[RMDB]
RNA sequence: GGGAACGACUCGAGUAGAGUCGAAAACUAUUUAUAGACAGAACAGUGGAAAACGUAUAUCGCUAUAAACCUUAAACCCCGAAUCUUCCAGUCGUACGAUUCCACAUAGGCGAGGCAUAAGCGAAAGCAUCGGGAUGACGUUCGCGUCAUCCCGAUGAAAAGAAACAACAACAACAAC
Reactivity to DMS in 0.01 (KOAc 150mM, MgCl2 10mM, bicine 150mM(pH8.5), 24C), signal-to-noise 1, nucleotides 027 to 126: c010u020a070u060u020u000a040u060a080g010a140c020a170g040a040a200c060a130g030u000g000g030a020a090a040a090c090g000u000a140u040a010u000c020g020c020u000a080u000a090a130a060c060c070u010u000a030a050a080c020c000c050c000g000a080a070u020c070u050u030c070c020a150g020u000c120g010u090a030c130g000a070u000u050c030c120a010c010a020u000a130g000g000c020g040a020g000g000c030a010u000a090a100g000c000g000a030a110a030g000
Reactivity to 2A3 in 0.01 (KOAc 150mM, MgCl2 10mM, bicine 150mM(pH8.5), 24C), signal-to-noise 1, nucleotides 027 to 126: c000u020a110u060u120u040a140u010a000g080a050c160a100g080a190a050c030a030g000u000g000g050a100a090a000a000c000g020u020a000u000a000u100c000g000c000u030a000u000a170a000a000c000c000u040u060a050a130a150c000c000c000c000g020a070a030u120c000u040u000c040c000a020g000u030c000g000u070a000c000g010a020u040u000c030c000a000c000a190u090a000g020g000c000g040a000g000g090c070a060u030a140a070g050c010g010a060a000a000g030
The record gives the reactivity of an RNA of 177 nucleotides to DMS and 2A3. For DMS the reverse transcriptase was MarathonRT. It was measured as part of the RMDB library OK1LIB. The reactions ran in a buffer of 150 mM KOAc, 10 mM MgCl2 and 150 mM bicine (pH 8.5), at 24 C. The DMS profile rests on 1,099 reads. Reactivities are given for positions 27 through 126.